[RMDB]
RNA sequence: GGGAACGACUCGAGUAGAGUCGAAAAUACAAUAGCGUAGGGAACCAAGCUAAGAGGUUGGAAGUCCAAGGGUAGAGGGCUUGGUUCGCAGCUGCUCUAGAAGAGGUCCCACUCCCUACGCCGCAAACCAGGACAGAUGAUUCGUCAUCUGUCCUGGAAAAGAAACAACAACAACAAC
Reactivity to 2A3 in 0.01 (KOAc 150mM, MgCl2 10mM, bicine 150mM(pH8.5), 24C), signal-to-noise 1, nucleotides 027 to 126: u160a010c090a010a100u110a120g040c000g000u010a000g000g030g010a010a010c000c010a050a020g010c010u120a180a000g080a040g080g070u050u080g000g050a170a050g060u020c010c010a000a030g100g070g080u090a110g080a090g130g060g020c000u030u020g020g000u020u080c070g000c000a000g000c020u100g020c000u040c000u090a090g020a160a010g040a090g050g040u030c010c030c000a080c020u000c010c000c020u000a000c010g050c090c000g010c000a060a090a070
Reactivity to DMS in 0.01 (KOAc 150mM, MgCl2 10mM, bicine 150mM(pH8.5), 24C), signal-to-noise 1, nucleotides 027 to 126: u010a130c190a080a130u000a110g010c030g000u000a000g120g050g000a050a120c030c010a000a030g000c020u010a110a090g030a140g000g010u010u010g000g040a180a090g000u000c020c050a050a050g010g020g010u000a100g000a100g000g000g010c030u000u000g000g000u020u000c070g010c100a050g010c000u010g000c090u000c050u010a070g010a060a050g000a130g000g020u010c000c000c000a150c140u000c000c010c010u000a010c000g030c000c190g020c140a080a050a140

This 177-nucleotide RNA was probed chemically with 2A3 and DMS. For 2A3 the reverse transcriptase was SuperScript II with manganese. For DMS, 669 sequencing reads were counted. For DMS the reverse transcriptase was MarathonRT. The data come from the RNA Mapping Database (RMDB), library M2PK90. The RNA was probed in 150 mM KOAc, 10 mM MgCl2 and 150 mM bicine (pH 8.5) at 24 C.